[RMDB]
RNA sequence: GGGAACGACUCGAGUAGAGUCGAAAACGCAUGCUCAUAGGGCCAGGGCGUGUGCCGGUGCGCUCCUUGGACAGGGAUGACCGGGCGGCGGACGCGCACUCUCUGCGCGAGGGCGCCAAGGCCUUCCGUGGGACAGGAAGUUCGCUUCCUGUCCCACAAAAGAAACAACAACAACAAC
Reactivity to 2A3 in 0.01 (KOAc 150mM, MgCl2 10mM, bicine 150mM(pH8.5), 24C), signal-to-noise 1, nucleotides 027 to 126: c020g020c010a020u020g000c000u020c050a130u160a210g060g010g000c010c040a030g080g020g000c020g000u020g010u040g040c000c010g000g030u110g080c060g050c080u110c020c000u020u140g120g110a050c130a050g000g040g030a070u060g030a020c020c000g060g010g000c030g020g000c000g000g080a000c010g000c010g000c020a030c020u130c020u000c040u030g030c040g000c040g000a050g070g060g020c010g000c030c020a040a070g050g000c020c010u130u040c030c010
Reactivity to DMS in 0.01 (KOAc 150mM, MgCl2 10mM, bicine 150mM(pH8.5), 24C), signal-to-noise 2, nucleotides 027 to 126: c080g010c020a020u010g010c010u010c020a130u000a160g000g000g000c000c000a160g010g000g040c000g050u000g010u020g010c000c020g000g060u020g000c130g000c090u000c010c000u000u020g000g000a230c180a120g000g000g000a080u010g000a060c030c020g000g000g050c300g020g020c000g010g060a200c030g000c030g030c010a080c220u010c170u010c180u000g020c050g010c000g000a130g010g020g020c030g000c020c070a130a030g040g000c020c030u000u000c200c070